[RMDB]
RNA sequence: GGGAACGACUCGAGUAGAGUCGAAAAUUUGUAGGCAGUAUUUGUAAUACCCAUCUCCAUACUCAAACAUUUAGGGAGGUGAAUCUUUUUUGUGUGUGGGUAAUGGAGUCUCACUCUGUCCCCCAGGACCCUUCAAUCAUUUCGAUGAUUGAAGGGUAAAAGAAACAACAACAACAAC
Reactivity to 2A3 in 0.01 (KOAc 150mM, MgCl2 10mM, bicine 150mM(pH8.5), 24C), signal-to-noise 2, nucleotides 027 to 126: u150u110u180g060u110a010g030g000c020a010g020u040a110u140u110u030g040u080a210a000u060a150c020c000c000a040u040c010u000c020c010a010u020a020c000u020c040a040a120a040c020a060u200u210u200a060g040g010g000a010g130g040u130g080a050a060u130c000u070u070u110u020u110u040g040u010g010u010g000u000g050g040g000u050a130a190u020g000g000a010g030u000c030u040c070a040c020u090c020u000g040u010c000c030c020c000c020a000g020g160
Reactivity to DMS in 0.01 (KOAc 150mM, MgCl2 10mM, bicine 150mM(pH8.5), 24C), signal-to-noise 3, nucleotides 027 to 126: u000u010u010g010u000a100g000g010c020a030g000u010a050u000u010u000g010u010a100a100u000a130c010c020c020a150u010c000u000c000c010a030u000a040c020u010c010a090a050a030c030a020u000u010u010a030g010g000g000a020g000g000u000g000a130a150u020c010u000u000u010u010u010u000g020u000g000u000g020u010g000g000g000u000a040a070u010g010g000a020g020u000c080u000c120a130c180u000c010u000g000u000c020c030c000c000c030a150g000g020